[RMDB]
RNA sequence: GGGAACGACUCGAGUAGAGUCGAAAAUAAGCUGACCAGCUAUGAGGUCAUACAUCGUCAUAGCACUAAGAAGAGAGAUCUUCGAGGACAGAGAUGUCCAAGACGACGAGAACAUCGUCGUCGAUACGAACAGGUCGUAUUUCGAUAUGACUUGUUCAAAAGAAACAACAACAACAAC
Reactivity to DMS in 0.01 (KOAc 150mM, MgCl2 10mM, bicine 150mM(pH8.5), 24C), signal-to-noise 9, nucleotides 027 to 126: u050a090a130g010c180u010g000a010c000c000a200g000c000u000a010u000g000a010g010g010u010c020a070u020a110c270a070u020c140g010u000c000a000u000a010g010c000a180c180u030a060a080g000a010a010g000a010g000a140g000a100u000c000u000u000c010g010a130g000g000a020c010a020g010a180g010a130u000g010u010c010c010a120a090g000a020c000g010a010c000g000a020g000a130a110c230a100u000c010g000u000c000g010u000c000g000a090u040a060c200
Reactivity to 2A3 in 0.01 (KOAc 150mM, MgCl2 10mM, bicine 150mM(pH8.5), 24C), signal-to-noise 9, nucleotides 027 to 126: u210a030a020g100c070u030g010a000c000c000a000g000c000u000a000u000g000a000g010g010u010c040a010u170a140c090a120u170c160g040u000c000a000u000a000g010c000a010c020u050a030a030g000a000a000g010a000g010a000g010a030u000c000u000u000c020g040a130g000g000a000c000a000g050a000g020a050u040g010u000c000c000a010a030g000a000c000g000a000c010g010a000g030a130a090c090a220u010c000g000u000c000g000u000c000g000a020u060a090c110
An RNA of 177 nucleotides, treated with DMS and 2A3 and read out base by base. The data come from the RNA Mapping Database (RMDB), library OK1LIB. For DMS, 55,768 sequencing reads were counted. Values cover nucleotides 27 to 126. The reactions ran in a buffer of 150 mM KOAc, 10 mM MgCl2 and 150 mM bicine (pH 8.5), at 24 C.